Chemical mapping of a 177-nucleotide RNA with DMS and 2A3. For DMS, 953 sequencing reads were counted. For 2A3 the reverse transcriptase was SuperScript II with manganese. Conditions: 150 mM KOAc, 10 mM MgCl2 and 150 mM bicine (pH 8.5), 24 C.

RNA sequence: GGGAACGACUCGAGUAGAGUCGAAAAGCGACGAGCUGAUCUGCCUGUGGACGCCGGCCGAUCUCGGCGGCGUCGGCAUGGCCUACCACGACUUCCACCAGCUCGACGACGAGGAAGUCCGCGCGCAGAUGCGAGUGCAUUUCGAUGCACUCGCAUCAAAAGAAACAACAACAACAAC
Reactivity to DMS in 0.01 (KOAc 150mM, MgCl2 10mM, bicine 150mM(pH8.5), 24C), signal-to-noise 2, nucleotides 027 to 126: g010c000g020a120c030g000a070g020c010u000g000a210u000c180u000g010c000c010u000g010u010g000g010a080c040g040c010c000g020g040c000c060g010a220u000c300u010c030g000g050c010g020g000c000g010u010c010g000g020c020a000u020g010g010c030c300u010a050c040c010a020c100g010a040c010u000u000c000c000a150c300c010a010g000c000u000c000g010a090c030g060a060c120g020a160g000g000a090a050g000u000c000c070g010c070g020c100g000c100a110
Reactivity to 2A3 in 0.01 (KOAc 150mM, MgCl2 10mM, bicine 150mM(pH8.5), 24C), signal-to-noise 1, nucleotides 027 to 126: g010c000g060a050c020g000a020g000c010u000g010a120u050c120u180g000c000c000u040g000u050g160g020a020c000g030c030c050g190g230c030c000g140a300u100c180u130c260g000g000c030g000g040c000g010u010c000g010g000c030a100u200g040g000c000c020u090a080c020c100a020c050g030a030c010u040u000c000c000a110c000c000a020g030c000u030c020g090a080c010g000a030c040g040a040g000g010a000a000g020u000c010c050g080c020g040c000g000c110a010